[RMDB]
RNA sequence: GGGAACGACUCGAGUAGAGUCGAAAAAGCGUACGAUGGCUCGCAUGUCAUCCAGGGCACGGUCGAAAUCGUCAUUGACCACCACAUAAUCGGCCUCGCACACAUGCUCGAUUACGCUUCGAGCUUCAGCACAUACUGCGUUCGCGCAGUAUGUGCUAAAAGAAACAACAACAACAAC
Reactivity to 2A3 in 0.01 (KOAc 150mM, MgCl2 10mM, bicine 150mM(pH8.5), 24C), signal-to-noise 2, nucleotides 027 to 126: a020g000c000g020u030a020c040g000a090u030g000g050c010u050c080g140c110a060u220g000u020c020a000u070c080c080a070g020g050g020c060a030c070g000g100u020c010g030a130a010a100u100c060g050u040c090a140u040u120g020a040c050c020a030c040c060a050c030a120u140a050a100u050c000g020g010c000c000u040c060g050c020a050c010a000c000a090u130g030c010u080c000g010a010u030u040a000c020g000c000u020u040c020g000a010g000c040u070u060c040
Reactivity to DMS in 0.01 (KOAc 150mM, MgCl2 10mM, bicine 150mM(pH8.5), 24C), signal-to-noise 1, nucleotides 027 to 126: a040g000c020g010u000a090c240g000a150u000g000g010c040u010c190g040c220a100u020g010u000c020a030u000c060c160a130g000g000g040c060a030c150g020g020u000c030g000a040a030a120u020c140g000u000c090a100u000u000g010a060c030c030a120c080c050a070c050a040u010a060a120u000c030g020g000c020c030u000c100g000c120a040c210a050c110a140u000g000c010u000c020g000a030u000u030a040c060g010c020u000u000c020g020a030g010c000u000u000c200
An RNA of 177 nucleotides, treated with 2A3 and DMS and read out base by base. The reactions ran in a buffer of 150 mM KOAc, 10 mM MgCl2 and 150 mM bicine (pH 8.5), at 24 C. High 2A3 reactivity points to a flexible backbone, as in loops and unpaired stretches.